[RMDB]
RNA sequence: GGGAACGACUCGAGUAGAGUCGAAAACAGAAAAGAGGUAGUUGACUCGUUUAUGGAGGACUGUGAACGUAACGGGACGUACGCGUACAACUACUCGCUGAAGGUUACUCUGAAAGCAGUUGGAAUAGUCACUAGCACAGCGGCGACACCCACAGUCGGAUAGGACUUCAUUCGUGAAGUCCUAUCCAAAAGAAACAACAACAACAAC
Reactivity to 2A3 in 0.01 (KOAc 150mM, MgCl2 10mM, bicine 150mM(pH8.5), 24C), signal-to-noise 2, nucleotides 027 to 156: c020a020g160a120a130a010a020g100a010g000g090u080a010g040u000u030g000a070c000u000c050g000u030u080u130a070u130g080g040a040g080g030a020c030u010g010u030g090a140a080c040g000u060a030a070c040g000g010g030a020c040g020u070a060c050g010c020g030u020a040c010a070a000c000u070a020c030u010c080g010c020u000g020a050a000g090g000u030u130a090c080u070c020u070g040a050a030a000g030c020a010g020u070u080g060g060a070a020u060a070g050u010c010a010c090u030a050g000c090a010c030a090g010c000g040g000c000g030a020c020a030c060c010c030a060c030a020g040u100c040